[RMDB]
Source information:
Structure probing data (DMS and 2A3) for a 177-nucleotide construct. Conditions: 150 mM KOAc, 10 mM MgCl2 and 150 mM bicine (pH 8.5), 24 C. The data come from the RNA Mapping Database (RMDB), libraries RFM100 and RFMREP.

RNA sequence: GGGAACGACUCGAGUAGAGUCGAAAAUGCCAAGCAACAUCGUCUAGAUCUUAAAUAUAAGAUCAAGCCGAAGUUGGUUUGCUGCACUUUGCUGGGAGAUUAGAUUAGUUUCCUCUUUUAGUUUGGCGGUCUACAGGAAAUUCGUUUCCUGUAGACCAAAAGAAACAACAACAACAAC
Reactivity to DMS in 0.01 (KOAc 150mM, MgCl2 10mM, bicine 150mM(pH8.5), 24C), signal-to-noise 2, nucleotides 027 to 126: u000g010c000c020a000a020g000c020a010a000c010a060u000c010g000u000c010u000a100g010a020u000c000u000u000a020a220a110u040a140u030a010a010g000a020u000c000a050a020g010c030c000g030a030a030g000u010u000g000g010u000u000u010g000c100u000g020c040a010c060u000u000u000g000c030u000g000g020g000a050g000a080u040u020a090g000a120u050u010a050g030u000u000u000c010c030u010c090u020u000u010u000a100g000u010u020u000g000g020c300
Reactivity to 2A3 in 0.01 (KOAc 150mM, MgCl2 10mM, bicine 150mM(pH8.5), 24C), signal-to-noise 7, nucleotides 027 to 126: u100g010c000c010a000a000g050c000a000a010c000a030u010c000g010u000c010u000a040g000a010u000c000u030u050a150a250a190u300a150u030a050a030g000a000u000c000a000a000g010c010c000g010a030a000g000u010u010g100g190u010u030u010g020c010u030g000c010a020c030u040u040u060g010c020u030g000g230g020a080g020a150u100u080a130g080a190u090u060a040g100u020u010u010c010c000u040c050u040u140u060u040a110g040u030u050u060g050g020c040